RNA sequence: GGGAACGACUCGAGUAGAGUCGAAAAGUCGGGAUUGUUUAUGGUGGUCGUUGAAGUCAUAACCAUAAGAUGAACGUUAGACUACGGAAAAUCUAUGAAAGUUUAUCAUAGUUAUUGGGCGACCGAGCUAUAAUUAUAUUUUCGAAUAUAAUUAUAGAAAAGAAACAACAACAACAAC
Reactivity to DMS in 0.01 (KOAc 150mM, MgCl2 10mM, bicine 150mM(pH8.5), 24C), signal-to-noise 1, nucleotides 027 to 126: g010u010c040g000g000g000a150u000u000g010u000u000u050a040u020g000g010u000g030g000u010c030g030u000u000g030a170a060g040u020c060a010u020a030a010c040c050a070u010a040a130g040a130u010g000a080a090c160g000u010u010a020g010a030c080u010a110c090g010g010a070a060a120a130u010c000u000a050u010g000a040a080a170g010u020u020u020a040u000c030a040u000a020g000u000u010a030u040u030g020g000g010c010g000a030c040c000g000a140g030
Reactivity to 2A3 in 0.01 (KOAc 150mM, MgCl2 10mM, bicine 150mM(pH8.5), 24C), signal-to-noise 1, nucleotides 027 to 126: g020u010c010g060g000g060a250u000u110g020u090u170u030a050u140g020g080u030g050g000u020c000g000u000u070g050a080a040g180u080c010a070u010a140a020c010c010a040u060a120a120g090a040u050g000a030a050c010g000u000u000a000g010a040c050u020a010c050g010g000a000a010a110a110u000c000u000a000u010g030a050a090a060g070u160u210u140a080u020c000a010u000a040g020u040u050a050u160u130g020g000g020c000g000a010c000c010g000a050g020